[RMDB]
RNA sequence: GGGAACGACUCGAGUAGAGUCGAAAAAUUCCCUCUUAGCGUGGAGGUUUAACUACGCUCGUUCCCCAUAUCGGUGUGGGCGCACCGGAUUUAUAAAUCAAAGUCCUUUAGGGAACGGAAAGGAACACAGUAUUCGUUAGUUCGCUAACGAAUACUGAAAAGAAACAACAACAACAAC
Reactivity to DMS in 0.01 (KOAc 150mM, MgCl2 10mM, bicine 150mM(pH8.5), 24C), signal-to-noise 3, nucleotides 027 to 126: a270u010u000c020c000c000u000c060u010u010a010g000c000g090u000g010g010a080g010g010u000u000u010a070a080c010u000a000c010g010c010u000c000g020u000u010c000c000c000c040a200u010a060u010c000g000g000u000g010u010g000g000g010c030g000c000a000c010c000g010g010a270u000u000u000a030u020a020a030a020u010c110a030a030a020g030u000c000c000u010u010u030a130g010g000g000a020a080c050g000g000a040a070a040g000g000a060a040c140a240
Reactivity to 2A3 in 0.01 (KOAc 150mM, MgCl2 10mM, bicine 150mM(pH8.5), 24C), signal-to-noise 1, nucleotides 027 to 126: a020u030u010c010c000c000u000c000u010u050a000g000c020g010u010g030g020a030g060g020u160u160u110a030a090c020u040a000c010g000c000u000c010g010u000u020c000c000c000c000a020u080a020u080c000g000g000u020g000u030g000g000g000c110g010c020a000c010c000g030g000a000u010u200u050a190u070a070a020a010u050c140a000a010a010g020u030c000c000u000u020u050a070g000g010g000a060a010c030g000g010a030a060a010g100g020a050a010c060a000